[RMDB]
RNA sequence: GGGAACGACUCGAGUAGAGUCGAAAAGUAAGAUAGAUGAAGAGAAUAUUUAGGGGUUGAAACGCAGUCCUUCCCGGAGCAAGUAGGGGGGUCAAUGAGAAUGAUCUGAAGACCUCCCUUGACGCAUGACCCACUAUAUUUUCGAAUAUAGUGGGUCAAAAGAAACAACAACAACAAC
Reactivity to DMS in 0.01 (KOAc 150mM, MgCl2 10mM, bicine 150mM(pH8.5), 24C), signal-to-noise 3, nucleotides 027 to 126: g010u010a050a110g020a090u000a050g000a060u000g000a070a070g000a160g000a090a070u000a030u020u010u010a070g040g000g010g000u000u000g000a040a060a090c100g010c070a040g010u000c050c040u010u000c020c000c000g010g000a130g020c070a050a150g000u000a040g000g000g030g030g000g020u000c000a050a180u010g020a030g010a130a150u040g010a080u000c000u000g010a210a090g000a010c000c030u000c000c030c010u000u000g000a100c080g020c060a140u030
Reactivity to 2A3 in 0.01 (KOAc 150mM, MgCl2 10mM, bicine 150mM(pH8.5), 24C), signal-to-noise 2, nucleotides 027 to 126: g140u150a090a090g040a190u130a050g100a000u150g010a090a050g050a010g060a120a070u060a110u080u150u120a150g040g010g000g000u090u000g060a030a100a020c100g030c040a000g050u000c000c000u000u070c020c020c010g020g000a080g000c080a140a010g060u080a040g010g000g000g000g000g000u000c000a040a080u130g000a000g030a090a250u210g070a090u090c000u010g000a190a000g030a010c030c000u030c000c000c000u000u000g010a000c000g030c020a010u150